RNA sequence: GGGAACGACUCGAGUAGAGUCGAAAACACAACCUCACCGACCAAAUCCGGCCCGACGACGUCCCGGACGACAUCCACAUUUAGGAGCACAGAUGGGUUAUUUCCUGCAGGACAACCCGAACCCCAACACCGGGCAGUUCGGCUGGCCGCGGACGAACGUUAUCGGACAUUUCGAUGUCCGAUAACGAAAAGAAACAACAACAACAAC
Reactivity to 2A3 in 0.01 (KOAc 150mM, MgCl2 10mM, bicine 150mM(pH8.5), 24C), signal-to-noise 1, nucleotides 027 to 156: c100a000c020a030a240c040c000u200c090a180c020c000g080a090c020c050a090a120a030u100c000c010g000g000c020c040c000g000a010c000g010a000c030g220u270c000c020c000g060g030a080c090g020a020c010a060u020c000c000a000c000a050u090u120u220a030g020g020a030g010c050a010c020a150g070a240u180g070g000g000u010u000a130u080u150u000c040c010u170g010c040a180g010g010a060c000a140a120c010c010c010g000a020a040c030c030c000c000a070a000c020a000c040c020g000g000g000c000a000g140u080u000c020g000g010c030u020g000g000c000c000g000c100g020g000a000c020g020a090a030